Background
This 207-nucleotide RNA was probed chemically with 2A3 and DMS. For DMS the reverse transcriptase was MarathonRT. The RNA was probed in 150 mM KOAc, 10 mM MgCl2 and 150 mM bicine (pH 8.5) at 24 C.
RNA sequence: GGGAACGACUCGAGUAGAGUCGAAAAGAUGUUCGCUGAUUCGUCAGCCGCAUGCCCAGGUGGCCGCGAUCUUCAAGGCUACGGCGCGGAUAGGUCCGCGCUGAUCGUUUUCCUCAAACGACGCUAUAAAAGGAACGAAGGUUCGCCUUCGUUCCAAUCUCAUAUAGACGUUCGCGUCUAUAUGAGAAAAAGAAACAACAACAACAAC
Reactivity to 2A3 in 0.01 (KOAc 150mM, MgCl2 10mM, bicine 150mM(pH8.5), 24C), signal-to-noise 5, nucleotides 027 to 156: g040a010u040g020u070u150c100g010c020u020g000a020u020u100c190g070u030c080a000g000c000c010g010c000a010u060g020c010c000c010a030g010g010u010g010g000c020c030g090c060g060a020u000c010u010u010c030a020a010g010g000c000u000a010c020g000g000c000g000c000g010g020a050u130a240g140g210u050c010c000g000c000g000c010u000g000a010u010c000g000u040u050u100u040c030c030u120c090a110a100a070c080g080a070c060g010c110u060a040u110a290a110a060a070g010g000a000a000c000g000a000a000g020g000u040u100c210g090c020c000u010u000c000g000u010u000c000c000a000a000
Reactivity to DMS in 0.01 (KOAc 150mM, MgCl2 10mM, bicine 150mM(pH8.5), 24C), signal-to-noise 2, nucleotides 027 to 156: g000a040u000g010u020u000c100g020c020u010g010a050u010u020c240g000u000c020a020g020c030c080g000c030a000u000g020c020c010c000a150g050g010u000g000g020c000c020g020c060g000a050u000c030u030u000c070a050a300g000g020c010u000a030c010g010g000c000g000c000g000g010a170u010a120g010g010u000c020c000g000c030g030c030u000g010a020u000c030g020u010u000u000u000c030c030u000c090a110a080a070c030g010a090c070g070c080u000a150u010a070a130a150a190g000g010a020a030c020g020a020a040g000g000u000u000c280g040c000c000u010u000c000g020u000u000c000c000a000a010